[RMDB]
RNA sequence: GGGAACGACUCGAGUAGAGUCGAAAAUGAACGAACGCUGAAAAGCACCCCACAAAGGGGGGUGAAAUAGGGCUUGAAAUCAGGUGGCGAUGGAGCGACGGGGCAUAAAAGGCCUCUCUGGGAACGAGAUCUUCCUCAAUUUCGAUUGAGGAAGAUCAAAAGAAACAACAACAACAAC
Reactivity to 2A3 in 0.01 (KOAc 150mM, MgCl2 10mM, bicine 150mM(pH8.5), 24C), signal-to-noise 3, nucleotides 027 to 126: u090g000a060a020c040g040a070a000c000g030c030u050g010a000a000a000a090g020c000a010c000c000c000c010a090c110a050a240a070g110g020g000g000g000g000u020g000a000a020a010u170a040g070g000g000c000u020u070g060a070a050a030u080c050a040g050g000u020g050g000c040g020a070u070g020g010a030g010c010g020a050c070g010g000g010g000c000a030u150a100a100a010a030g060g000c000c000u020c010u010c050u010g050g010g030a050a030c040g000a020
Reactivity to DMS in 0.01 (KOAc 150mM, MgCl2 10mM, bicine 150mM(pH8.5), 24C), signal-to-noise 4, nucleotides 027 to 126: u020g010a100a070c090g020a080a060c180g000c010u000g000a080a100a160a060g010c010a120c020c000c000c020a060c140a110a070a130g030g010g020g010g000g000u010g010a020a040a070u030a090g010g010g010c030u000u010g020a050a050a050u010c080a030g020g010u000g000g000c070g020a060u010g000g000a040g010c070g000a090c090g000g000g000g010c040a060u010a040a050a120a090g000g010c020c000u000c020u000c040u000g000g000g000a090a040c120g000a140